Chemical mapping of a 177-nucleotide RNA with 2A3 and DMS.
DMS adducts were read by reverse transcription with MarathonRT.
Source: RMDB library TTRDEL, as collected in RNAgym.

[RMDB]
RNA sequence: GGGAACGACUCGAGUAGAGUCGAAAAGAUAUGGAGGAGAGCGAUAAGAACGUAUCGGAAACGAUACAGUUCUUUUGACGCUCCACUCCUAAGUCAAAAGUGGUACGCAGUUCGCUGCGUACCACAACCUACUAUAAUCCUUCGGGAUUAUAGUAGGAAAAGAAACAACAACAACAAC
Reactivity to 2A3 in 0.01 (KOAc 150mM, MgCl2 10mM, bicine 150mM(pH8.5), 24C), signal-to-noise 4, nucleotides 027 to 126: g010a000u020a020u060g010g000a000g020g030a070g000a020g070c000g040a100u100a300a010g000a000a000c000g010u000a000u000c010g020g000a020a010a000c010g000a010u000a010c020a020g000u000u010c010u020u050u030u050g030a000c000g000c000u030c000c000a060c000u000c000c000u000a020a000g010u020c020a020a030a050a160g000u000g000g000u000a000c000g000c000a010g020u040u130c210g090c200u000g000c000g010u020a000c000c000a000c000a000a000
Reactivity to DMS in 0.01 (KOAc 150mM, MgCl2 10mM, bicine 150mM(pH8.5), 24C), signal-to-noise 5, nucleotides 027 to 126: g000a020u000a160u000g000g000a010g030g010a300g010a010g010c000g020a070u010a020a010g010a010a010c010g010u000a000u000c000g000g000a040a020a070c000g000a010u000a000c000a040g010u000u000c000u000u000u000u010g010a300c030g000c000u000c000c200a130c010u000c000c000u000a010a070g000u000c010a070a060a110a130g010u000g010g000u000a010c000g000c000a010g010u000u010c260g010c000u000g000c000g000u000a000c000c000a000c000a010a080